[RMDB]
RNA sequence: GGGAACGACUCGAGUAGAGUCGAAAAAAAAGAUAUGGAUCCUUGAACUACGCAGGUCCCCUUCGAUGAAACGUCAUCGGAAACGAUGACGUGGAGAAGGUCCUGCGCAAGGAUCCUAAGUCAAAAACACAUAAACUAACUUCGGUUAGUUUAUGUGAAAAGAAACAACAACAACAAC
Reactivity to DMS in 0.01 (KOAc 150mM, MgCl2 10mM, bicine 150mM(pH8.5), 24C), signal-to-noise 6, nucleotides 027 to 126: a050a070a090a110g000a000u000a050u010g000g000a010u000c000c000u000u000g000a080a020c110u020a300c030g020c010a000g000g000u010c230c300c000c010u000u000c010g000a130u020g000a100a140a010c000g000u000c000a010u000c010g010g000a010a010a020c000g020a010u010g010a010c000g000u000g000g000a010g000a020a010g010g000u010c000c000u000g010c000g000c000a000a000g010g000a000u000c000c000u000a000a050g000u010c000a100a070a070a120a160
Reactivity to 2A3 in 0.01 (KOAc 150mM, MgCl2 10mM, bicine 150mM(pH8.5), 24C), signal-to-noise 6, nucleotides 027 to 126: a000a000a010a020g020a020u030a020u060g000g000a000u000c000c000u000u000g030a070a020c110u200a050c300g000c000a000g040g030u150c110c080c010c020u050u000c110g300a300u030g000a000a000a000c000g000u000c000a000u000c000g000g000a000a000a010c000g000a000u010g000a000c000g000u000g000g000a010g000a010a000g000g010u000c000c010u000g010c000g000c000a000a000g000g000a000u000c000c000u000a000a000g000u010c030a030a040a060a180a040